RNA sequence: GGGAACGACUCGAGUAGAGUCGAAAAAUAUCGCGGAUGAAACUGAACUUCCAUACGACGAAAAUGGUAUCACGCCAGAUGUCAUUAUUAAUUCUACAUCCAUCUUCUCUAGAAAAACUAUAUCUAUGUUGAUAGAAGUUAUUUUAACAGCCGCAUACUCGUCUACAGUUUUCGAACUGUAGACGAGAAAAGAAACAACAACAACAAC
Reactivity to 2A3 in 0.01 (KOAc 150mM, MgCl2 10mM, bicine 150mM(pH8.5), 24C), signal-to-noise 3, nucleotides 027 to 156: a000u080a000u050c070g000c010g000g010a070u040g070a090a000a080c080u080g020a020a030c000u060u010c030c010a060u080a160c070g010a020c030g040a060a000a060a140u060g000g010u040a050u090c000a010c160g050c060c040a030g010a030u090g020u030c020a000u000u110a020u050u110a080a100u070u000c020u040a060c040a100u040c050c000a090u000c030u100u030c030u020c060u090a040g050a050a190a020a020a030c070u090a140u010a010u190c020u030a050u260g060u020u040g090a040u020a090g010a020a010g020u060u030a070u070u140u060u060a050a020c030a020g020c000c000g000c020a010u050a100
Reactivity to DMS in 0.01 (KOAc 150mM, MgCl2 10mM, bicine 150mM(pH8.5), 24C), signal-to-noise 1, nucleotides 027 to 156: a050u000a040u000c090g040c020g000g000a100u000g020a120a050a180c030u000g000a090a110c060u000u000c020c030a090u020a110c030g030a090c030g020a050a110a080a060u000g060g060u010a180u010c080a130c150g000c050c060a080g000a020u010g000u000c080a050u020u000a150u020u000a080a090u000u000c050u020a060c020a100u000c000c050a020u020c050u000u000c030u000c020u020a130g000a050a020a090a070a060c030u000a100u000a100u010c010u000a090u010g000u000u010g010a130u000a010g020a080a050g030u010u000a050u000u010u000u000a070a130c000a080g040c000c040g020c010a110u010a080
The data come from the RNA Mapping Database (RMDB), library OK3TST.
Chemical mapping of a 207-nucleotide RNA with 2A3 and DMS.
The DMS profile rests on 1,786 reads.
For DMS the reverse transcriptase was MarathonRT.
DMS (dimethyl sulfate) methylates the pairing face of unpaired adenines and cytosines.
For 2A3 the reverse transcriptase was SuperScript II with manganese.
The reactions ran in a buffer of 150 mM KOAc, 10 mM MgCl2 and 150 mM bicine (pH 8.5), at 24 C.